[RMDB]
Chemical mapping of a 177-nucleotide RNA with 2A3 and DMS. Values cover nucleotides 27 to 126.
RNA sequence: GGGAACGACUCGAGUAGAGUCGAAAAGAGCGUCGAGAGACGAAGAGAAGUGCACCGAUCAGCAAUGGGGAACGUAAUGGUGCACAAGAGUAAGUCAGUGUAACGUUCUCGGGGCACUGGAGGCAGACGCCACGAUAGGAUUCGUCCUAUCGUGGCGAAAAGAAACAACAACAACAAC
Reactivity to 2A3 in 0.01 (KOAc 150mM, MgCl2 10mM, bicine 150mM(pH8.5), 24C), signal-to-noise 2, nucleotides 027 to 126: g080a000g000c010g030u020c030g020a020g000a000g030a050c060g050a190a040g040a010g000a150a040g020u010g000c010a000c000c000g070a060u210c050a020g080c040a040a190u090g100g000g000g060a010a030c000g000u040a180a000u160g000g000u000g000c010a000c000a000a020g070a000g060u090a200a000g010u090c060a000g040u040g000u040a100a070c020g060u050u000c000u000c000g000g000g020g010c020a000c060u040g060g000a080g000g070c070a000g000a190
Reactivity to DMS in 0.01 (KOAc 150mM, MgCl2 10mM, bicine 150mM(pH8.5), 24C), signal-to-noise 2, nucleotides 027 to 126: g000a040g000c000g010u000c010g000a260g000a300g000a000c090g030a070a130g030a200g010a170a180g020u000g110c080a000c000c080g100a150u000c150a080g010c080a160a150u000g040g030g010g030a040a040c260g000u000a080a070u000g000g030u030g010c040a030c090a050a030g000a030g000u000a050a090g020u000c000a060g000u000g000u000a030a140c110g000u000u000c010u000c010g010g040g000g000c000a060c040u030g000g000a110g020g080c060a110g000a180
The reactions ran in a buffer of 150 mM KOAc, 10 mM MgCl2 and 150 mM bicine (pH 8.5), at 24 C. For 2A3, 1,035 sequencing reads were counted.